This 177-nucleotide RNA was probed chemically with DMS. It was measured as part of the RMDB library RFMREP. For DMS, 842 sequencing reads were counted. Reactivities are given for positions 27 through 126.

RNA sequence: GGGAACGACUCGAGUAGAGUCGAAAACUAAACUAGCCCCAAUCAUCGAAAAUGGAGAAACCGACAGUGCACGUUGACGUAGACCCCCAAAGUCCGUUUGUGCUACAACUGCAGAAGAGUUUCCCACGAACCCUUGAGGGUUCGCCCUCAAGGGUUCAAAAGAAACAACAACAACAAC
Reactivity to DMS in 0.01 (KOAc 150mM, MgCl2 10mM, bicine 150mM(pH8.5), 24C), signal-to-noise 2, nucleotides 027 to 126: c040u000a070a060a140c130u000a120g000c030c000c010c050a070a160u000c050a070u010c090g000a040a060a110a030u000g000g000a060g040a040a110a060c070c010g000a070c080a050g010u000g010c020a000c030g020u000u010g000a100c040g010u010a090g010a150c030c030c020c060c160a080a090a300g000u000c030c090g010u000u020u000g010u000g000c060u000a080c080a000a070c020u000g020c030a080g000a110a040g000a220g010u000u000u020c000c000c030a100c190